Source information: The data come from the RNA Mapping Database (RMDB), library M2PK50. This 177-nucleotide RNA was probed chemically with DMS and 2A3. DMS adducts were read by reverse transcription with MarathonRT. For 2A3, 2,174 sequencing reads were counted.

[RMDB]
RNA sequence: GGGAACGACUCGAGUAGAGUCGAAAAGUGCACGACUUCGGUCGUGCACAAAUAAAGGCAGUCGAGUGGGUACGGCACAGUCAUACGCUGACGCCACGACAAAAAGUAACGUCUUCGGACGUUACAACAAGGGACUUUAGUUCGCUAAAGUCCCUUGAAAAGAAACAACAACAACAAC
Reactivity to DMS in 0.01 (KOAc 150mM, MgCl2 10mM, bicine 150mM(pH8.5), 24C), signal-to-noise 3, nucleotides 027 to 126: g020u000g020c010a030c020g020a030c000u000u020c180g030g020u010c020g040u010g010c010a010c000a020a030a080u000a130a090a180g000g030c050a070g030u010c020g010a090g000u000g000g010g020u010a070c060g000g010c040a120c130a060g000u010c100a080u010a090c100g000c030u010g000a070c060g020c000c000a030c060g020a040c090a050a040a090a060a080g000u010a000a000c010g020u010c000u010u010c260g010g000a010c000g010u010u000a000c020a100a110
Reactivity to 2A3 in 0.01 (KOAc 150mM, MgCl2 10mM, bicine 150mM(pH8.5), 24C), signal-to-noise 2, nucleotides 027 to 126: g000u000g050c020a000c010g010a020c060u060u180c300g040g000u000c000g010u030g000c010a000c000a000a000a010u020a010a000a000g100g010c060a020g050u040c020g100a050g100u090g010g090g060u100a110c040g000g030c060a020c050a080g090u080c040a100u050a190c060g000c030u010g040a030c060g070c040c000a020c040g050a030c030a000a030a000a000a000g000u000a000a000c000g000u000c000u020u030c150g070g000a000c010g000u000u000a000c000a000a000